[RMDB]
Background
Structure probing data (DMS and 2A3) for a 207-nucleotide construct. Values cover nucleotides 27 to 156. The data come from the RNA Mapping Database (RMDB), library OK3TST.
RNA sequence: GGGAACGACUCGAGUAGAGUCGAAAACGAUCAGUACGUUCGCGUACUGAUCGAAGCUACUGGAGACAGUAGCAAGUCUAAGACCUUGUUAGGCGGAAACAAGGAAAAAUGGAGGAAGGCCGGGCCUCCAUACUUAGACAACCGCCAACCGGCCCAAGCUAUAGGAUCAUUUCGAUGAUCCUAUAGCAAAAGAAACAACAACAACAAC
Reactivity to DMS in 0.01 (KOAc 150mM, MgCl2 10mM, bicine 150mM(pH8.5), 24C), signal-to-noise 1, nucleotides 027 to 156: c000g000a000u000c010a040g020u000a000c000g020u000u000c260g030c010g040u010a010c000u030g080a000u000c020g000a040a090g020c010u000a020c010u030g020g010a300g000a270c020a010g020u010a010g060c000a020a030g000u010c010u040a070a020g000a300c020c000u000u000g050u010u000a040g000g000c120g100g030a300a100a030c000a020a030g000g000a000a060a050a140a120u020g000g000a070g010g000a040a080g000g020c000c020g030g030g010c040c000u020c010c000a020u000a020c030u010u010a020g000a050c000a100a130c040c090g000c080c050a080a120c030c000g000g050c010c010c030a030a300
Reactivity to 2A3 in 0.01 (KOAc 150mM, MgCl2 10mM, bicine 150mM(pH8.5), 24C), signal-to-noise 5, nucleotides 027 to 156: c010g000a010u000c000a000g010u000a000c010g020u040u070c220g010c010g100u000a000c000u000g000a000u000c000g000a000a000g000c000u000a010c000u000g000g030a050g010a040c000a000g000u000a000g000c000a000a020g000u010c000u010a020a030g020a150c000c000u010u010g000u020u020a130g060g090c070g060g050a050a020a010c010a000a000g020g000a050a090a050a030a020u030g000g000a000g020g010a060a140g010g000c010c010g030g000g080c000c000u000c000c000a000u010a020c000u010u010a010g010a020c020a040a080c090c060g070c060c070a030a030c010c000g010g000c000c010c010a070a010
Conditions: 150 mM KOAc, 10 mM MgCl2 and 150 mM bicine (pH 8.5), 24 C. The 2A3 profile rests on 7,354 reads. For 2A3 the reverse transcriptase was SuperScript II with manganese. Reactivities are rounded to 0.1 and cut off at 0 and 3.